This 177-nucleotide RNA was probed chemically with DMS and 2A3. Reactivities are rounded to 0.1 and cut off at 0 and 3. Conditions: 150 mM KOAc, 10 mM MgCl2 and 150 mM bicine (pH 8.5), 24 C. Values cover nucleotides 27 to 126.
RNA sequence: GGGAACGACUCGAGUAGAGUCGAAAAGACCUUAGGAUUUGUCCGAUAUGCAUGACCAUGUCGGAUCUAGGCUAAGGAAGGAUGGGCGAAUUUUCUAUGGUCAUGCAUAGAGACAAAUUCCAUCCUAGAUUGUAUAGUUAUUCGUAACUGUGCAAUCAAAAGAAACAACAACAACAAC
Reactivity to DMS in 0.01 (KOAc 150mM, MgCl2 10mM, bicine 150mM(pH8.5), 24C), signal-to-noise 9, nucleotides 027 to 126: g010a160c060c030u010u010a080g010g010a040u000u000u000g000u000c010c020g000a170u040a010u000g000c020a010u010g000a030c030c010a020u010g000u010c080g010g010a020u010c030u010a110g010g000c030u010a080a100g020g020a120a080g000g000a050u010g020g000g000c040g030a070a100u020u020u020u010c050u030a030u000g000g000u000c040a020u000g000c000a000u000a010g000a200g000a020c030a000a010a030u010u010c030c060a070u000c020c030u000a160
Reactivity to 2A3 in 0.01 (KOAc 150mM, MgCl2 10mM, bicine 150mM(pH8.5), 24C), signal-to-noise 9, nucleotides 027 to 126: g110a070c010c020u040u120a070g010g010a030u020u010u020g010u010c020c040g040a050u010a000u090g000c000a010u010g000a010c000c000a010u030g090u150c040g020g030a030u020c020u050a050g100g020c030u080a060a080g100g040a080a060g080g020a090u100g030g040g040c070g070a100a090u070u060u030u030c060u050a010u030g000g000u000c000a000u010g000c000a000u000a000g020a010g000a000c010a000a010a010u100u000c020c000a020u030c000c010u010a040